[RMDB]
Conditions: 150 mM KOAc, 10 mM MgCl2 and 150 mM bicine (pH 8.5), 24 C. Structure probing data (2A3) for a 177-nucleotide construct.
RNA sequence: GGGAACGACUCGAGUAGAGUCGAAAAUCAAUGGACUUCGGUCCAUUGAAAAAGUCAAUAAAGCAAGUGCUGAGCUGAAUGACAACAGCACAAAGAAAAGAAAAAUCGUGCACUUCGGUGCACGAAACGCUGACACAAUGUUCGCAUUGUGUCAGCGAAAAGAAACAACAACAACAAC
Reactivity to 2A3 in 0.01 (KOAc 150mM, MgCl2 10mM, bicine 150mM(pH8.5), 24C), signal-to-noise 1, nucleotides 027 to 126: u010c000a000a020u000g000g000a000c010u040u020c230g070g030u000c000c000a000u000u000g010a000a000a000a000a000g070u050c050a070a250u160a240a180a020g020c110a280a000g000u020g000c020u010g030a010g040c060u070g240a150a130u110g040a070c030a060a050c010a090g000c030a000c030a030a070a000g120a030a050a000a030g190a040a080a010a000a020u020c010g000u000g010c000a000c020u000u060c180g000g000u010g000c000a000c030g000a000a000a000

It was measured as part of the RMDB library M2PK50.